[RMDB]
RNA sequence: GGGAACGACUCGAGUAGAGUCGAAAAAGCGGUGCGUACGCGCACCGCAACGGGUGAUGAAGGCCGGCACCCGGCCCUGCCCCAACUCUGCUCUGCUCCUGAAGACAGCUCCAUACGUGGAGCUGAAAUCCCUGAUUGUUUUCGAACAAUCAGGGAUAAAAGAAACAACAACAACAAC
Reactivity to DMS in 0.01 (KOAc 150mM, MgCl2 10mM, bicine 150mM(pH8.5), 24C), signal-to-noise 1, nucleotides 027 to 126: a100g060c020g000g030u020g010c000g020u020a050c250g040c010g070c000a020c010c020g030c000a000a000c230g030g000g020u040g000a060u010g020a150a080g000g000c000c000g000g000c110a100c200c060c000g000g000c060c000c010u000g020c020c000c000c020a290a060c060u000c000u020g000c000u010c020u000g050c010u010c040c030u000g000a110a150g000a220c010a010g000c010u000c000c000a060u010a040c200g030u000g010g000a010g020c010u000g000a000a090
Reactivity to 2A3 in 0.01 (KOAc 150mM, MgCl2 10mM, bicine 150mM(pH8.5), 24C), signal-to-noise 6, nucleotides 027 to 126: a000g020c010g010g020u030g010c010g010u040a030c300g010c020g020c130a000c000c010g010c000a010a000c010g000g000g020u060g090a300u150g050a210a090g020g020c020c010g020g090c160a210c090c160c010g000g010c020c000c010u030g010c010c000c000c000a000a020c010u010c000u010g000c000u000c010u020g020c010u010c000c000u010g070a040a020g090a050c000a000g000c000u010c000c010a010u010a080c240g120u060g000g000a000g000c000u000g000a010a000